[RMDB]
RNA sequence: GGGAACGACUCGAGUAGAGUCGAAAAGAUAUGGACGCACGUUUCUCGAAGAACUAAUUCGGAAACGAAUUAGGGAGAGACACGUAGCGUCCUAAGUCAAAGACCUAAUCACUUCGGUGAUUAGGUCCGGCUAGUAUAGCUUCGGCUAUACUAGCCGAAAAGAAACAACAACAACAAC
Reactivity to 2A3 in 0.01 (KOAc 150mM, MgCl2 10mM, bicine 150mM(pH8.5), 24C), signal-to-noise 2, nucleotides 027 to 126: g030a020u100a010u240g000g000a020c010g000c020a000c000g000u020u090u000c030u010c000g260a300a020g000a070a020c000u010a030a010u020u000c010g030g100a080a120a080c030g000a010a010u000u000a010g040g000g000a060g000a010g000a000c000a000c040g000u090a070g020c010g020u000c030c000u010a010a000g010u030c040a060a200a050g000a020c000c000u010a000a010u000c000a020c030u090u120c300g170g000u000g000a000u010u020a010g010g010u000c000
Reactivity to DMS in 0.01 (KOAc 150mM, MgCl2 10mM, bicine 150mM(pH8.5), 24C), signal-to-noise 2, nucleotides 027 to 126: g030a080u000a300u010g010g000a000c000g030c000a040c000g040u000u010u000c000u000c000g020a080a190g020a160a200c010u000a000a010u010u000c010g010g000a150a130a150c000g000a000a010u010u000a010g020g000g000a130g010a000g010a000c110a010c000g020u000a140g030c010g020u000c020c000u000a000a080g000u010c070a060a160a130g010a000c000c000u000a010a020u000c000a010c000u000u000c260g030g010u000g000a030u000u000a010g000g000u000c010

The record gives the reactivity of an RNA of 177 nucleotides to 2A3 and DMS. 2A3 adducts were read by reverse transcription with SuperScript II with manganese. Conditions: 150 mM KOAc, 10 mM MgCl2 and 150 mM bicine (pH 8.5), 24 C.